This 177-nucleotide RNA was probed chemically with DMS and 2A3. Values are in units of 0.01, from 0 to 300, in steps of 10. For DMS the reverse transcriptase was MarathonRT.

[RMDB]
RNA sequence: GGGAACGACUCGAGUAGAGUCGAAAAACGUCCUGGCAUGAGUUACGACUCAUGCCAGGACGAAAAGUGUACCCGAAUCUGAUAUCCUAUCAUCUGAAAAAGGAUGCAGUUUCUGGUAUACUUCAAAGAAACUAACAGUAUUCGUACUGUUAGUUUCAAAAGAAACAACAACAACAAC
Reactivity to DMS in 0.01 (KOAc 150mM, MgCl2 10mM, bicine 150mM(pH8.5), 24C), signal-to-noise 4, nucleotides 027 to 126: a070c030g040u000c000c020u000g010g060c010a010u000g000a040g010u010u010a130c260g010a110c030u000c000a000u020g020c040c020a020g000g010a000c000g000a000a020a030a020g000u000g010u000a000c000c000c040g010a020a000u000c000u000g000a090u010a010u000c000c000u000a130u030c090a200u020c200u030g000a040a080a090a110a020g000g000a010u000g000c000a000g000u000u000u000c000u010g000g000u000a010u000a000c000u000u000c110a070a090a120
Reactivity to 2A3 in 0.01 (KOAc 150mM, MgCl2 10mM, bicine 150mM(pH8.5), 24C), signal-to-noise 7, nucleotides 027 to 126: a000c010g000u000c000c000u000g010g000c010a000u000g000a010g020u040u090a130c300g040a030c110u000c000a000u010g000c000c000a000g000g000a000c000g010a000a000a000a000g000u000g000u000a000c000c000c020g000a000a000u000c000u000g030a210u070a010u120c000c010u060a050u170c080a100u060c160u260g090a120a060a050a030a020g000g000a000u000g000c000a000g000u000u010u000c000u010g000g000u000a000u000a000c000u030u030c050a100a120a030